[RMDB]
RNA sequence: GGGAACGACUCGAGUAGAGUCGAAAAACCGCGGAUGGUUUGCGGAACCUUGGCGACACAUCAAACAUCACCGGGUUGCUGGGCGACAUCAGCGGGCUAAUCGCCGACAAUACCAUCCCGGCGUUUGAAGCGCUCUUUGGAUUCUUGAAUGACACCGGUUAUAUCGUUACUUCGGUAACGAUAUAACAAAAGAAACAACAACAACAAC
Reactivity to 2A3 in 0.01 (KOAc 150mM, MgCl2 10mM, bicine 150mM(pH8.5), 24C), signal-to-noise 4, nucleotides 027 to 156: a000c020c010g000c050g020g010a040u040g020g070u020u050u120g060c030g010g030a030a020c010c000u100u300g040g000c040g020a090c030a010c020a240u130c100a110a080a040c040a030u070c040a010c020c000g060g000g000u040u080g060c030u060g000g100g010c040g030a030c010a060u080c030a040g050c030g010g020g030c050u100a060a040u050c010g020c020c000g050a060c070a100a100u120a140c030c030a030u080c000c010c000g030g000c020g000u010u060u100g080a070a010g000c020g000c030u020c050u100u100u100g110g030a190u060u000c000u040u130g100a120a050u150g040a030c020a020c090c020g010
Reactivity to DMS in 0.01 (KOAc 150mM, MgCl2 10mM, bicine 150mM(pH8.5), 24C), signal-to-noise 1, nucleotides 027 to 156: a040c010c010g000c070g040g050a070u000g000g030u050u000u010g000c000g000g000a060a020c020c000u000u060g040g030c000g000a080c010a050c090a110u000c130a120a110a040c060a090u000c080a080c030c020g000g000g010u000u010g000c040u010g000g040g040c010g030a030c080a120u000c040a090g040c000g030g000g020c070u000a110a190u000c070g020c020c000g020a120c050a070a080u000a050c080c050a090u010c000c000c000g020g020c010g000u000u000u000g000a090a160g000c040g020c060u020c030u010u010u010g020g000a240u000u000c020u000u030g020a100a080u030g010a060c070a130c050c020g020